Source: RMDB library TTRDES, as collected in RNAgym. Chemical mapping of a 177-nucleotide RNA with 2A3 and DMS. 2A3 adducts were read by reverse transcription with SuperScript II with manganese. For DMS, 646 sequencing reads were counted.
RNA sequence: GGGAACGACUCGAGUAGAGUCGAAAAGAUAUGGACCGUCGCUACGCAACAGCUAUGACAUCGGAAACGAUGUAUAGACAUGCGUAAAAGUCGGUCCUAAGUCAAAAGUCGGUUGUUCGCAACCGACGGCCGUAUGGUGGUUCGCCACCAUACGGCCAAAAGAAACAACAACAACAAC
Reactivity to 2A3 in 0.01 (KOAc 150mM, MgCl2 10mM, bicine 150mM(pH8.5), 24C), signal-to-noise 1, nucleotides 027 to 126: g020a020u050a090u090g000g000a000c000c030g030u040c040g000c170u000a000c000g040c010a140a230c050a300g020c000u030a020u100g300a070c000a010u000c000g070g000a020a060a040c000g010a020u030g070u030a000u000a020g070a130c080a200u300g000c000g000u020a020a210a000a010g040u000c000g000g010u000c000c000u000a020a010g030u000c010a000a000a300a000g080u030c010g000g000u010u000g000u000u120c300g100c210a020a010c000c050g000a000c000
Reactivity to DMS in 0.01 (KOAc 150mM, MgCl2 10mM, bicine 150mM(pH8.5), 24C), signal-to-noise 1, nucleotides 027 to 126: g000a020u000a300u000g010g020a000c000c000g030u000c040g050c290u000a010c020g030c030a120a050c300a210g020c000u000a000u000g030a030c010a000u000c000g040g020a110a110a190c010g010a010u000g020u040a040u000a030g000a040c110a170u000g010c000g050u000a010a020a210a160g010u020c010g000g000u000c000c000u000a000a040g000u010c140a130a110a140a070g000u000c000g040g000u000u000g000u010u010c280g000c030a060a000c000c000g010a020c000